[RMDB]
RNA sequence: GGGAACGACUCGAGUAGAGUCGAAAAGAUGUUUUUAUUUGCAUAUAUUCUUGUCAUCAUGUCACCAAGAGAGCUUAAUGUGACUUUCUUGUAUCUAUUCUGGUGCAUUCCAUUUGUUUUGCUACCAUACAUGACCUUUUAUUAAGACUUCAUUGAGAAUGUUGAAGAUCUUCGGAUCUUCAACAUUAAAAGAAACAACAACAACAAC
Reactivity to 2A3 in 0.01 (KOAc 150mM, MgCl2 10mM, bicine 150mM(pH8.5), 24C), signal-to-noise 3, nucleotides 027 to 156: g040a030u050g050u060u090u040u050u090a260u130u130u160g010c040a030u110a000u000a070u250u020c010u110u050g020u030c020a040u010c000a020u100g040u030c020a020c080c020a030a000g010a000g000a010g030c020u060u090a110a080u170g070u120g140a190c000u010u010u000c000u000u020g050u060a070u010c030u030a110u080u110c020u100g060g000u010g010c010a010u030u000c070c030a110u070u060u230g080u000u070u040u030g000c010u040a030c010c010a040u030a110c030a020u090g040a030c030c020u100u130u060u080a180u030u160a070a000g050a050c010u090u030c100a090u000u160g120a040g050
Reactivity to DMS in 0.01 (KOAc 150mM, MgCl2 10mM, bicine 150mM(pH8.5), 24C), signal-to-noise 2, nucleotides 027 to 156: g020a050u020g010u010u000u010u000u000a050u010u020u000g020c030a110u010a120u010a050u010u000c050u000u000g000u000c030a300u000c020a110u010g020u000c060a130c300c020a000a060g000a050g020a010g010c030u000u010a110a150u000g010u020g040a020c010u000u000u000c010u000u000g000u000a130u000c050u020a110u000u000c060u010g010g030u000g010c030a080u000u010c080c040a180u000u000u020g000u000u000u000u000g050c010u000a110c060c040a150u000a090c100a060u000g000a080c050c010u000u000u010u000a080u020u000a100a040g010a080c040u000u010c030a050u000u000g010a240g000